RNA sequence: GGGAACGACUCGAGUAGAGUCGAAAAUCUAGUGGCUUCGGCCACUAGAAAACCUAGUCAAAAUAACGCAAGACUAGGAAAGCCAAAGUACGAAAGUACAAAAAAGCUUACACUUCGGUGUAAGCAAUCAUAAAGACAACUUCGGUUGUCUUUAUGAAAAAGAAACAACAACAACAAC
Reactivity to DMS in 0.01 (KOAc 150mM, MgCl2 10mM, bicine 150mM(pH8.5), 24C), signal-to-noise 3, nucleotides 027 to 126: u010c000u000a000g040u010g000g030c010u000u020c240g030g020c000c000a010c010u010a000g000a000a030a100a070c000c000u000a000g000u010c000a100a070a130a140u000a080a120c300g010c210a110a120g000a010c010u010a010g000g000a000a060a210g010c020c000a060a120a090g000u000a000c000g000a070a050a160g000u000a000c000a000a040a120a050a130a170g010c000u000u000a010c000a000c000u000u000c140g000g000u000g010u000a010a010g000c000a020a030
Reactivity to 2A3 in 0.01 (KOAc 150mM, MgCl2 10mM, bicine 150mM(pH8.5), 24C), signal-to-noise 2, nucleotides 027 to 126: u000c000u000a000g000u000g010g000c000u020u020c160g140g000c010c000a000c000u020a000g000a000a000a000a000c010c000u020a000g010u000c020a020a050a130a300u160a270a060c130g000c110a150a080g000a000c000u000a000g010g000a090a040a010g010c000c000a130a040a020g000u000a010c010g050a170a020a000g000u000a020c000a030a170a010a010a020a000g000c000u000u000a010c010a000c010u040u110c300g140g000u010g000u000a010a000g000c000a000a000